[RMDB]
RNA sequence: GGGAACGACUCGAGUAGAGUCGAAAAGAAAACGGCAGCAAGCCGAGCAAGUAGAGCAACGCGAGCAAGAUCAGCAACGCGAGCAACUUGAGCAACAUGAGCAAGAUCAGCAACUACAGCAAAAAAAGCAUAACCCUAUGUUCGCAUAGGGUUAUGCAAAAGAAACAACAACAACAAC
Reactivity to DMS in 0.01 (KOAc 150mM, MgCl2 10mM, bicine 150mM(pH8.5), 24C), signal-to-noise 1, nucleotides 027 to 126: g040a100a090a050a130c020g010g010c050a040g000c080a070a130g020c040c060g000a150g020c040a020a040g020u000a030g040a150g000c040a110a060c050g030c010g000a110g040c050a050a050g000a080u020c150a070g050c000a040a060c100g030c050g050a190g010c010a070a010c070u000u000g000a110g000c070a010a070c150a010u000g000a070g000c040a020a050g030a030u010c050a050g020c030a010a010c080u000a070c070a080g000c110a000a000a070a060a110a020a060
Reactivity to 2A3 in 0.01 (KOAc 150mM, MgCl2 10mM, bicine 150mM(pH8.5), 24C), signal-to-noise 1, nucleotides 027 to 126: g060a020a100a000a010c030g020g000c010a050g000c080a130a000g000c010c010g070a020g020c050a080a030g020u120a020g000a000g000c050a140a090c000g000c010g070a000g000c050a110a010g100a210u140c050a040g060c030a090a180c010g000c020g040a020g000c020a010a020c010u040u050g000a020g060c020a030a080c000a190u160g050a010g050c000a040a000g010a150u050c010a020g030c010a050a090c020u080a040c020a020g090c140a050a030a060a060a060a000a010
The data come from the RNA Mapping Database (RMDB), library M2PK90. This 177-nucleotide RNA was probed chemically with DMS and 2A3. 2A3 is a SHAPE reagent: it acylates the 2'-hydroxyl of flexible nucleotides of all four kinds. For DMS, 657 sequencing reads were counted. The 2A3 profile rests on 950 reads.